[RMDB]
RNA sequence: GGGAACGACUCGAGUAGAGUCGAAAACUCACGACGUUCGCGUCGUGAGAAAUAAAUUCAGCGGUAAUUCCAGCGCAAAUAUUACCGCUGAUGCGCUCGAAAAAAGGGUAUCCUUCGGGAUACCCAACACAGUACUGUGGUUCGCCACAGUACUGUGAAAAGAAACAACAACAACAAC
Reactivity to 2A3 in 0.01 (KOAc 150mM, MgCl2 10mM, bicine 150mM(pH8.5), 24C), signal-to-noise 2, nucleotides 027 to 126: c010u000c000a000c020g010a000c000g010u040u060c240g010c020g160u020c000g010u000g000a000g000a000a020a010u040a010a030a020u060u010c000a000g000c000g020g020u030a020a020u100u110c130c080a140g060c060g010c160a000a170a050u160a040u050u010a000c000c010g010c000u000g000a000u010g000c090g040c020u110c090g060a060a100a010a000a040a070g000g020g010u000a000u010c000c000u020u050c170g080g010g000a000u000a000c000c010c000a000a000
Reactivity to DMS in 0.01 (KOAc 150mM, MgCl2 10mM, bicine 150mM(pH8.5), 24C), signal-to-noise 2, nucleotides 027 to 126: c010u000c010a020c000g030a000c000g020u000u000c160g010c020g020u000c000g020u010g000a010g000a000a080a050u000a070a080a060u010u000c000a010g010c000g010g010u010a000a000u000u040c140c120a150g000c190g020c130a110a090a060u000a030u000u000a010c000c000g000c000u000g000a010u000g020c250g020c050u000c040g000a000a040a030a080a090a080g000g000g010u000a030u000c010c000u000u010c170g060g000g000a010u000a020c000c000c000a010a020
Chemical mapping of a 177-nucleotide RNA with 2A3 and DMS. It was measured as part of the RMDB library M2PK50. As a SHAPE reagent, 2A3 marks flexible, mostly unpaired nucleotides at the ribose 2'-OH. For DMS the reverse transcriptase was MarathonRT.